[RMDB]
RNA sequence: GGGAACGACUCGAGUAGAGUCGAAAACGCUGUGCUUUGGCUUGUCCAUUUCAAAUUAGGUGUCAACAAUGUGGGCUUAGAGUAGUCUUCGCUUUCAUGGUUGUCAAAGAAGUCGGGAAUGCCUCAGGCUGGCAACAGAGCAGGGAAAACGACUCGCGUCAUAUUGGACGUUCGCGUCCAAUAUGACAAAAGAAACAACAACAACAAC
Reactivity to 2A3 in 0.01 (KOAc 150mM, MgCl2 10mM, bicine 150mM(pH8.5), 24C), signal-to-noise 1, nucleotides 027 to 156: c020g010c010u000g000u020g060c000u080u050u090g030g030c010u040u080g050u000c010c020a050u000u010u100c140a110a110a130u150u120a210g010g100u040g030u060c000a000a000c010a040a060u020g000u040g010g010g000c000u020u050a020g000a030g030u280a090g070u040c000u020u010c000g010c020u000u040u060c040a020u010g070g000u010u000g010u020c000a040a010a030g050a070a040g060u050c060g000g030g030a100a060u080g030c010c010u010c010a000g100g000c020u000g020g000c030a060a030c030a070g040a020g000c030a060g000g000g020a040a070a060a060c070g040a060c020u030c030g030c030